[RMDB]
RNA sequence: GGGAACGACUCGAGUAGAGUCGAAAAGCCUUCGAGAGUGUACUUGACGAUGACCUUGUUCAGAACCAGGGGGUCUCCGACGUUCUCGCGCACCAGCAUCCGCACGUCGCUGUCGAGGAAGUCACGGAAGGUAGCAGAGACCGAAAGUAGCCGCGUCCGAGAGCGUACUGUUCGCAGUACGCUCUCGAAAAGAAACAACAACAACAAC
Reactivity to 2A3 in 0.01 (KOAc 150mM, MgCl2 10mM, bicine 150mM(pH8.5), 24C), signal-to-noise 1, nucleotides 027 to 156: g010c000c000u000u000c010g040a040g000a020g020u000g030u050a000c020u120u110g030a100c110g050a080u020g020a050c010c000u090u090g030u140u180c120a060g040a140a020c000c010a040g000g000g010g000g010u000c000u050c020c020g020a010c020g010u040u000c030u000c000g050c000g000c010a070c010c000a020g110c030a070u060c000c020g040c030a020c030g080u030c030g030c050u030g020u220c020g000a060g070g050a120a010g010u100c020a000c020g060g000a100a020g090g000u000a000g040c060a040g010a000g000a050c010c000g020a060a030a000g030u070a020g040c040c000g010c020g010u000c040

The data come from the RNA Mapping Database (RMDB), library OK3TST. The record gives the reactivity of an RNA of 207 nucleotides to 2A3. The RNA was probed in 150 mM KOAc, 10 mM MgCl2 and 150 mM bicine (pH 8.5) at 24 C. The 2A3 profile rests on 729 reads.